Background
This 177-nucleotide RNA was probed chemically with DMS and 2A3. 2A3 adducts were read by reverse transcription with SuperScript II with manganese. Reactivities are rounded to 0.1 and cut off at 0 and 3. 2A3 is a SHAPE reagent: it acylates the 2'-hydroxyl of flexible nucleotides of all four kinds. Reactivities are given for positions 27 through 126. For 2A3, 90,297 sequencing reads were counted.
[RMDB]
RNA sequence: GGGAACGACUCGAGUAGAGUCGAAAACACGGAGCCGUCACGUGCUAGCCAGGCAGCGCGUGGGUCAGGACACCGUGCUGAAUUGGCGGAACCGUCGGAGUCACGGUGACCGAUUUCGCGACUCGACGGAGGUUCGGAGGUUCGCCUUCGGACUUCCAAAAGAAACAACAACAACAAC
Reactivity to DMS in 0.01 (KOAc 150mM, MgCl2 10mM, bicine 150mM(pH8.5), 24C), signal-to-noise 9, nucleotides 027 to 126: c030a040c030g010g000a150g030c020c000g000u010c020a010c010g010u000g000c010u000a120g010c020c070a060g010g020c090a020g010c020g000c000g020u000g000g000g000u030c030a090g020g010a120c040a060c010c010g000u000g000c040u010g010a070a100u030u010g000g010c060g010g010a300a090c050c000g000u000c040g010g010a090g000u020c040a040c010g010g010u000g000a090c040c040g000a080u000u010u010c060g000c040g000a040c010u000c020g000a090c150
Reactivity to 2A3 in 0.01 (KOAc 150mM, MgCl2 10mM, bicine 150mM(pH8.5), 24C), signal-to-noise 9, nucleotides 027 to 126: c030a000c010g020g000a010g030c010c000g020u020c010a000c010g010u010g000c010u020a040g030c020c050a070g050g070c020a000g000c000g000c000g000u020g000g010g050u080c070a130g010g030a010c010a020c020c000g000u000g000c000u010g020a140a140u080u080g040g000c020g020g050a070a060c060c000g010u020c030g110g090a070g050u180c030a010c030g020g020u040g050a120c010c020g030a030u040u100u080c050g000c010g030a020c010u010c020g030a030c060